[RMDB]
RNA sequence: GGGAACGACUCGAGUAGAGUCGAAAAAAAGGCUGAGAACGUUUCUUCCAUGGAGGAACCAGAAGAUGAUUUGAGUGGGACCCAGUUCGUGUGUGAGACUGUCAUCCGAUCCCUUACGUUGGAUGCCAAACCCUACUUGCUUCGGCAAGUAGGGUUUAAAAGAAACAACAACAACAAC
Reactivity to DMS in 0.01 (KOAc 150mM, MgCl2 10mM, bicine 150mM(pH8.5), 24C), signal-to-noise 1, nucleotides 027 to 126: a040a080a000g020g020c020u000g000a250g030a060a100c100g010u000u000u000c020u000u000c050c100a080u020g020g010a100g010g000a070a050c050c060a110g030a070a080g010a040u000g000a130u000u010u000g000a120g010u010g020g000g000a130c040c060c010a050g030u000u000c070g070u020g000u020g020u010g000a110g000a070c090u000g000u010c070a050u000c000c010g010a070u000c050c040c020u000u020a080c110g000u000u000g040g000a070u000g000c110c030